[RMDB]
RNA sequence: GGGAACGACUCGAGUAGAGUCGAAAAGGUUGCGCGCCUGUUCCGGUGCAACGGGCUGUGCAUCGGCUCUGGCGGAUACACAGGCGGAUGGAAAUUUUCUGGCAGCACGGCUGGAAAGCGGUUCCGAUAUAAUAUCCAGGUUCGCCUGGAUAUUAUAAAAAGAAACAACAACAACAAC
Reactivity to DMS in 0.01 (KOAc 150mM, MgCl2 10mM, bicine 150mM(pH8.5), 24C), signal-to-noise 7, nucleotides 027 to 126: g010g010u010u000g010c050g010c030g020c010c010u000g010u000u000c020c020g010g010u010g010c070a080a090c080g000g010g020c040u010g010u000g010c080a040u010c010g010g000c090u000c070u010g010g010c020g000g000a090u000a060c150a060c060a050g000g010c030g010g000a090u000g010g000a050a090a140u010u000u000u000c020u000g010g010c030a110g020c130a070c160g000g000c020u000g000g000a020a050a040g010c150g010g010u000u000c000c010g010a250
Reactivity to 2A3 in 0.01 (KOAc 150mM, MgCl2 10mM, bicine 150mM(pH8.5), 24C), signal-to-noise 2, nucleotides 027 to 126: g080g020u060u080g000c110g000c000g000c010c000u010g010u030u020c010c010g010g060u090g020c030a070a070c070g040g110g000c050u120g050u050g060c020a060u080c000g000g000c020u020c060u100g060g000c000g030g000a030u090a100c070a000c030a060g050g060c060g060g020a060u080g030g020a040a090a060u080u070u020u000c010u030g000g000c010a060g060c050a090c080g090g020c020u010g030g020a050a000a010g040c010g030g000u010u000c000c010g000a000
Source information:
The record gives the reactivity of an RNA of 177 nucleotides to DMS and 2A3. The DMS profile rests on 15,816 reads. For DMS the reverse transcriptase was MarathonRT. For 2A3, 2,228 sequencing reads were counted.